[RMDB]
RNA sequence: GGGAACGACUCGAGUAGAGUCGAAAAUAGUUGUUUUUUUUUAGUAUUUGUCGUCUGUACAUUUUCCGUUUGAAUUUUCUAUCAUGCAAGCCUCAGAGAUUUGGUAGAUGCUUAAUGAUGUAGAGGUGUUGAAAUACUCAUUCGUGAGUAUUUCAACAAAAGAAACAACAACAACAAC
Reactivity to 2A3 in 0.01 (KOAc 150mM, MgCl2 10mM, bicine 150mM(pH8.5), 24C), signal-to-noise 2, nucleotides 027 to 126: u170a060g020u020u020g010u040u000u010u040u000u020u010u020u100a090g050u020a190u010u060u140g060u030c040g010u000c050u030g120u070a000c030a190u050u050u030u000c000c080g010u000u040u110g040a040a050u050u000u040u000c080u100a060u000c000a030u040g060c140a070a060g060c020c000u100c050a040g030a060g030a250u090u010u040g010g000u020a030g000a020u070g000c000u020u090a130a020u060g080a030u040g020u030a020g070a040g110g060u050
Reactivity to DMS in 0.01 (KOAc 150mM, MgCl2 10mM, bicine 150mM(pH8.5), 24C), signal-to-noise 2, nucleotides 027 to 126: u050a090g000u000u000g000u000u000u000u000u000u000u000u000u000a090g030u010a060u010u020u020g010u000c070g000u000c030u040g050u000a010c060a060u000u020u040u010c020c020g010u020u000u010g010a120a110u010u000u000u000c010u010a040u010c050a080u000g010c070a070a040g030c040c030u000c030a070g000a120g000a150u010u010u010g010g010u000a070g000a020u000g000c030u000u040a080a040u000g010a070u020g020u010a060g010a020g000g000u000
This 177-nucleotide RNA was probed chemically with 2A3 and DMS. It was measured as part of the RMDB libraries RFM100 and RFMREP. The RNA was probed in 150 mM KOAc, 10 mM MgCl2 and 150 mM bicine (pH 8.5) at 24 C. 2A3 adducts were read by reverse transcription with SuperScript II with manganese. High DMS reactivity at an A or C suggests that its Watson-Crick edge is free.